[RMDB]
RNA sequence: GGGAACGACUCGAGUAGAGUCGAAAAGCCGGGUGCAGUGGCUUAUGCUUGUAAUCCCAGCCCUUUGGGAGGCCAAGGCAGGUGGAUUGCUUGAGCCCAGGAGUUGGAGACCACCUGGGCAACGUGGCCAAACCCCAUCUCUACAAAAAAUACAAAACUAUCAUGAGUGGUUCGCCACUCAUGAUAGAAAAGAAACAACAACAACAAC
Reactivity to 2A3 in 0.01 (KOAc 150mM, MgCl2 10mM, bicine 150mM(pH8.5), 24C), signal-to-noise 2, nucleotides 027 to 156: g070c080c060g040g000g000u060g000c120a120g070u030g100g010c030u170u160a040u130g070c030u040u070g000u060a020a010u030c020c000c010a020g040c040c000c010u110u090u090g030g060g050a090g060g080c040c000a000a000g010g040c000a030g000g070u120g040g040a030u040u020g030c010u020u020g020a000g040c000c000c000a010g010g010a020g000u120u170g110g020a060g050a060c020c000a060c020c000u000g000g000g000c010a000a000c030g000u040g040g000c020c000a060a000a020c010c010c000c000a020u030c050u000c000u080a090c090a010a140a020a070a010a010u290a090c130a010a120a100a050
Source information
Structure probing data (2A3) for a 207-nucleotide construct. The RNA was probed in 150 mM KOAc, 10 mM MgCl2 and 150 mM bicine (pH 8.5) at 24 C. The data come from the RNA Mapping Database (RMDB), library OK3TST.